[RMDB]
This 177-nucleotide RNA was probed chemically with DMS and 2A3. The RNA was probed in 150 mM KOAc, 10 mM MgCl2 and 150 mM bicine (pH 8.5) at 24 C.

RNA sequence: GGGAACGACUCGAGUAGAGUCGAAAACAGCCAGGGUUAGAAAUGAGUUUCGUUCCAUUGUUAUCUAAAGAUUGCCAUUCUGAAAUGCUGUAAAUAGCAUGAUUCAAAUCAUCUUGUGCUGCAGCAGUCAAAGUCGAUACUUCGGUAUCGACUUUGAAAAAGAAACAACAACAACAAC
Reactivity to DMS in 0.01 (KOAc 150mM, MgCl2 10mM, bicine 150mM(pH8.5), 24C), signal-to-noise 4, nucleotides 027 to 126: c040a110g000c000c010a070g000g020g020u020u050a050g010a090a060a070u010g000a050g010u000u020u010c030g010u000u000c010c010a120u030u000g010u020u000a050u060c110u030a060a100a080g000a100u010u010g020c060c100a110u020u010c070u000g000a080a070a070u010g010c000u000g020u000a030a070a090u030a090g020c070a020u000g000a050u020u020c150a050a090a090u030c150a020u010c050u010u010g010u000g010c090u000g000c010a020g010c050a030g000
Reactivity to 2A3 in 0.01 (KOAc 150mM, MgCl2 10mM, bicine 150mM(pH8.5), 24C), signal-to-noise 4, nucleotides 027 to 126: c040a010g040c000c000a040g080g030g010u100u130a060g020a080a190a130u170g010a010g030u060u160u070c000g010u000u000c000c000a010u010u050g040u060u120a110u060c130u110a090a020a100g030a140u000u040g020c040c020a060u020u010c040u000g020a050a050a120u040g000c000u010g050u110a030a150a120u070a030g000c020a010u060g030a020u080u020c050a010a100a130u100c040a050u010c030u070u070g010u020g010c010u000g020c000a000g000c000a000g050